[RMDB]
RNA sequence: GGGAACGACUCGAGUAGAGUCGAAAAAUAAAUCCCUAAAGAAAGUGGGUGCGCGUUUGGCGCAUCAACUCGGGUGGAACCGCGGGAGCUACGCUCUCGUCCCGAGAAAACACCAAAACAAAAAAAACAACAUAAGCUAGUUCGCUAGCUUAUGUUGAAAAGAAACAACAACAACAAC
Reactivity to 2A3 in 0.01 (KOAc 150mM, MgCl2 10mM, bicine 150mM(pH8.5), 24C), signal-to-noise 3, nucleotides 027 to 126: a030u130a010a060a030u030c020c010c000u080a110a140a050g110a080a090a000g080u120g060g000g020u020g000c010g000c020g090u140u150u250g180g000c010g000c000a000u000c010a000a000c010u000c000g030g000g020u120g120g150a080a050c100c010g000c000g000g000g000a030g000c080u180a060c240g000c000u020c000u000c020g000u010c000c000c000g000a000g000a010a030a000a010c050a020c010c070a040a050a040a070c100a070a070a070a040a010a010a000a020
Reactivity to DMS in 0.01 (KOAc 150mM, MgCl2 10mM, bicine 150mM(pH8.5), 24C), signal-to-noise 2, nucleotides 027 to 126: a070u000a090a080a060u000c010c000c000u010a050a080a080g000a060a110a100g010u000g000g010g010u010g010c000g010c030g020u000u010u020g000g010c000g010c000a000u000c000a030a080c000u010c010g000g010g020u000g040g020a120a080c160c120g010c010g000g010g000a010g010c010u010a070c190g010c010u000c000u000c000g000u000c010c000c010g000a020g000a120a090a050a100c130a060c110c120a040a090a090a050c120a020a030a040a080a060a080a090a140